[RMDB]
RNA sequence: GGGAACGACUCGAGUAGAGUCGAAAAGCAUAUUUGUGCAACUGAAGCGUCAGCACCCGACACACGCCGGUCGGAAUCCGUAUCGCGACAUGGGGUGUAUGAAUUGGUGCACCGAGCGCACGACUUGCGGUAUUUUUAUCCGGUUUCAUAACGUACGUAUACUGGGUCCAUUCGUGGACCCAGUAUAAAAAGAAACAACAACAACAAC
Reactivity to 2A3 in 0.01 (KOAc 150mM, MgCl2 10mM, bicine 150mM(pH8.5), 24C), signal-to-noise 1, nucleotides 027 to 156: g000c010a100u100a110u300u070u300g070u010g020c040a080a120c100u120g100a070a000g070c030g040u060c040a070g000c030a050c010c000c000g190a050c040a000c000a000c080g080c030c000g000g060u000c010g020g010a010a010u000c130c020g170u200a070u160c080g010c010g190a010c030a140u300g010g000g020g000u010g000u010a100u070g000a130a110u180u160g020g000u000g000c030a000c000c050g070a090g010c100g010c010a000c040g090a070c030u090u130g000c040g020g010u010a070u150u270u040u010u040a020u050c000c020g050g000u020u060u000c050a040u050a030a140c200g110u270a000c180g000
Source information
An RNA of 207 nucleotides, treated with 2A3 and read out base by base. 2A3 adducts were read by reverse transcription with SuperScript II with manganese. Reactivities are given for positions 27 through 156. Reactivities are rounded to 0.1 and cut off at 0 and 3. The RNA was probed in 150 mM KOAc, 10 mM MgCl2 and 150 mM bicine (pH 8.5) at 24 C.